[RMDB]
RNA sequence: GGGAACGACUCGAGUAGAGUCGAAAACGGUGCCGUCCUUUAAUGCCAGGUGUCCUGCAGCCCAACAGGCUAUUAAAGAGGGGGAAGUGAGCUGUGUGUAGCGACAGGAUUCUGAAAGAGUGCGAACGAGCACGCAAUCUUUCGAGAUUGCGUGCUCAAAAGAAACAACAACAACAAC
Reactivity to DMS in 0.01 (KOAc 150mM, MgCl2 10mM, bicine 150mM(pH8.5), 24C), signal-to-noise 1, nucleotides 027 to 126: c120g010g010u000g000c040c020g020u010c010c040u000u000u000a090a030u030g060c030c030a120g000g010u010g020u010c040c050u000g010c110a080g000c010c040c050a130a110c220a090g010g000c070u010a070u010u000a030a040a030g000a180g040g000g000g000g010a020a120g030u020g000a080g000c040u000g030u000g010u010g010u000a100g030c030g000a070c130a050g000g010a110u000u000c070u030g000a070a060a040g000a070g010u000g000c060g000a050a100c200